An RNA of 177 nucleotides, treated with DMS and read out base by base.

RNA sequence: GGGAACGACUCGAGUAGAGUCGAAAAGAUAUGGAAGCUAGGGAGGAACUACAUUCGUCAGUCGGAAACGACUGAUGAAUGCCGACGAUCUAGCUUCCUAAGUCAAAUCGCUUCUUCGGAAGCGAAACAUACUGGAUUACUUCGGUAAUCCAGUAUGAAAAGAAACAACAACAACAAC
Reactivity to DMS in 0.01 (KOAc 150mM, MgCl2 10mM, bicine 150mM(pH8.5), 24C), signal-to-noise 4, nucleotides 027 to 126: g010a040u000a300u000g000g000a010a000g010c000u010a010g000g010g000a220g000g010a090a060c080u010a250c010a000u000u000c000g020u000c000a010g000u000c000g000g000a090a070a190c000g010a010c000u000g010a000u000g000a000a000u000g010c020c050g010a140c150g000a160u010c000u000a000g000c000u000u000c000c010u000a020a050g000u010c020a060a110a120u000c010g010c000u000u000c000u000u020c200g020g000a010a010g010c000g000a010a050a170

The reactions ran in a buffer of 150 mM KOAc, 10 mM MgCl2 and 150 mM bicine (pH 8.5), at 24 C. The data come from the RNA Mapping Database (RMDB), library TTRDEL. Reactivities are given for positions 27 through 126.